Notes: Structure probing data (DMS) for a 177-nucleotide construct. Values cover nucleotides 27 to 126. High DMS reactivity at an A or C suggests that its Watson-Crick edge is free.
[RMDB]
RNA sequence: GGGAACGACUCGAGUAGAGUCGAAAAAUUGAUGCGAAGGGGGGACGGUGAAGGCUAUGUUGGCCGGGCGACGGUUGUCCCGGUUUAAGCGUGUAGGCUGGUUUUCCAGGCAAAUCCGGAAAUUGAAAACUUCAUAACGGUUCGCCGUUAUGAAGUUAAAAGAAACAACAACAACAAC
Reactivity to DMS in 0.01 (KOAc 150mM, MgCl2 10mM, bicine 150mM(pH8.5), 24C), signal-to-noise 2, nucleotides 027 to 126: a100u000u020g000a130u000g000c040g000a080a090g030g000g000g000g020g040a060c080g030g000u000g000a040a150g010g020c020u020a090u000g000u000u010g010g010c000c000g020g000g030c300g000a060c120g020g010u010u000g010u010c030c000c010g000g000u000u000u000a030a080g020c040g010u010g030u020a090g010g020c030u000g000g020u000u000u010u000c020c020a120g010g000c040a050a020a080u000c020c040g020g020a040a090a120u000u030g010a080a070